[RMDB]
RNA sequence: GGGAACGACUCGAGUAGAGUCGAAAAUAACCAUAUGUGUUGGGCAGCCGCAAUACCUAUCGCUAUAUCUGGCGCUCAGGCUAUCAGUGGUCAGAACGCUCAGGCCAAAAUGAUUGCCGCUCAGACCGCUGCUGGUCGUCGUCAAGCUAUGGAAAUCAUUUGACGAAAUAUUCGUAUUUCGUCAAAUAAAAGAAACAACAACAACAAC
Reactivity to DMS in 0.01 (KOAc 150mM, MgCl2 10mM, bicine 150mM(pH8.5), 24C), signal-to-noise 3, nucleotides 027 to 156: u000a150a170c020c020a150u000a070u000g030u000g010u020u010g030g020g000c040a060g030c050c060g020c050a090a100u000a060c030c020u000a080u000c050g010c030u000a090u000a080u000c070u000g010g010c000g050c090u010c040a130g020g010c010u000a060u000c040a070g040u000g010g030u010c000a110g030a010a050c030g010c060u010c040a110g040g000c040c190a030a110a100a130u000g010a080u000u000g030c140c020g010c030u000c010a110g000a020c010c010g000c010u000g000c050u000g030g030u000c040g040u010c010g030u000c010a070a180g000c070u000a060u010g010g000a090a070a150u010c070
Reactivity to 2A3 in 0.01 (KOAc 150mM, MgCl2 10mM, bicine 150mM(pH8.5), 24C), signal-to-noise 5, nucleotides 027 to 156: u090a010a040c020c040a040u070a070u150g070u020g030u010u120g010g030g050c050a040g030c040c020g020c060a050a040u070a160c020c010u100a080u120c100g000c050u060a050u020a070u200c060u040g010g000c010g030c100u050c090a060g000g000c020u020a010u040c000a010g010u010g000g000u010c010a040g040a150a060c060g030c070u110c140a060g020g020c060c040a100a100a010a060u190g050a130u100u150g000c010c010g010c030u020c020a010g010a010c000c010g010c010u010g000c010u000g010g030u010c010g000u010c000g020u000c030a060a020g000c020u040a030u040g020g010a030a110a050u180c070